[RMDB]
RNA sequence: GGGAACGACUCGAGUAGAGUCGAAAAUCACCCCAAAUAGGAUAGCGAGGGAAGCACGCUUGAGGCUGAACCGCGAAAUAGUAUCAAGCUCACCAUGACGAAGCCUGUCGCUUGGCGUCUAAUUGGUUAAAUAAAUGAGCGACUAAGCAUGUAGUACGUAAGCGAAACUGUUCGCAGUUUCGCUUACAAAAGAAACAACAACAACAAC
Reactivity to 2A3 in 0.01 (KOAc 150mM, MgCl2 10mM, bicine 150mM(pH8.5), 24C), signal-to-noise 1, nucleotides 027 to 156: u120c010a060c000c040c010c010a000a060a130u240a120g080g000a020u010a030g000c010g050a190g080g000g000a000a000g000c000a000c110g020c000u010u030g030a010g030g000c000u030g000a010a010c000c010g030c000g110a010a000a010u250a020g070u050a050u120c030a050a000g000c000u000c040a010c010c000a000u000g020a000c080g010a080a010g000c000c000u040g020u030c000g000c040u010u070g000g000c000g000u000c000u030a080a090u020u030g010g000u000u150a130a030a070u200a010a050a050u110g010a010g010c030g000a000c000u110a050a000g110c050a020u160g010u080a030g080u010a000c050
This 207-nucleotide RNA was probed chemically with 2A3. For 2A3, 529 sequencing reads were counted. 2A3 adducts were read by reverse transcription with SuperScript II with manganese. Values are in units of 0.01, from 0 to 300, in steps of 10. Values cover nucleotides 27 to 156.